[RMDB]
RNA sequence: GGGAACGACUCGAGUAGAGUCGAAAAGAGCCACAGUGCGUUGGCGGAAUCGAUGUGGGGCGGCGGGGCGCAGGACUCGCAGCCCCCCGGGUGGUUGGUGAUCCUGGCCAGGAGCCAUCCCAGAUGGCAACAGGAAAAUUUUCGAAUUUUCCUGUUGAAAAGAAACAACAACAACAAC
Reactivity to DMS in 0.01 (KOAc 150mM, MgCl2 10mM, bicine 150mM(pH8.5), 24C), signal-to-noise 9, nucleotides 027 to 126: g010a160g010c020c010a050c070a110g020u030g010c170g010u020u000g010g010c040g010g010a100a080u020c080g010a080u030g010u040g010g000g010g010c010g010g000c010g000g000g000g000c030g000c120a030g000g000a040c020u000c010g010c000a030g000c000c010c010c000c000c020g000g000g020u010g000g010u000u000g000g010u020g010a110u010c030c000u000g010g000c050c050a090g010g010a150g000c010c010a060u010c000c030c040a100g000a100u020g000g010
Reactivity to 2A3 in 0.01 (KOAc 150mM, MgCl2 10mM, bicine 150mM(pH8.5), 24C), signal-to-noise 6, nucleotides 027 to 126: g080a020g010c010c000a050c030a060g230u140g130c060g090u130u040g030g000c050g050g040a070a050u130c050g040a050u110g070u190g070g000g000g020c010g010g000c010g000g020g010g000c110g000c060a050g060g150a030c010u000c020g020c010a000g000c000c000c000c000c000c010g000g010g020u080g020g030u070u000g040g030u060g030a080u030c010c000u030g050g020c020c030a060g010g040a030g000c000c000a020u010c040c010c000a050g020a100u130g050g000
Structure probing data (DMS and 2A3) for a 177-nucleotide construct. For DMS the reverse transcriptase was MarathonRT. For 2A3, 7,976 sequencing reads were counted. The RNA was probed in 150 mM KOAc, 10 mM MgCl2 and 150 mM bicine (pH 8.5) at 24 C.